[RMDB]
RNA sequence: GGGAACGACUCGAGUAGAGUCGAAAAGGCCCGAAGGGUUGAGUAGCACUCAGAGGGAGGAAUCCACUCGGAGAUGAGCAGUGAUCCCACCUCCAGAGGACCCCUUCAGCGAACAGAAGACCUCCAGCUUCUAUACCAACUUCGGUUGGUAUAGAAGAAAAGAAACAACAACAACAAC
Reactivity to 2A3 in 0.01 (KOAc 150mM, MgCl2 10mM, bicine 150mM(pH8.5), 24C), signal-to-noise 1, nucleotides 027 to 126: g060g020c000c000c010g030a000a000g020g060g010u170u110g080a090g050u100a010g060c000a020c080u040c010a020g000a010g000g030g010a190g020g010a040a030u000c050c000a010c040u010c000g160g060a230g050a230u270g010a040g090c200a060g070u060g170a040u050c000c020c000a020c000c000u000c000c010a040g000a010g040g040a050c010c000c020c010u000u040c000a030g030c000g050a060a030c050a060g090a200a010g070a060c000c010u010c030c000a030g060
Reactivity to DMS in 0.01 (KOAc 150mM, MgCl2 10mM, bicine 150mM(pH8.5), 24C), signal-to-noise 1, nucleotides 027 to 126: g010g060c020c030c020g040a050a040g010g000g020u000u000g000a120g010u010a140g010c080a300c000u000c000a150g000a020g000g000g020a140g010g000a050a020u000c000c000a160c010u000c010g000g020a170g000a140u010g000a020g010c090a070g050u030g000a030u000c020c000c010a140c010c010u000c000c060a180g000a020g020g000a120c080c010c030c000u000u000c010a060g000c010g010a080a030c080a070g010a100a060g010a130c030c040u010c010c080a100g000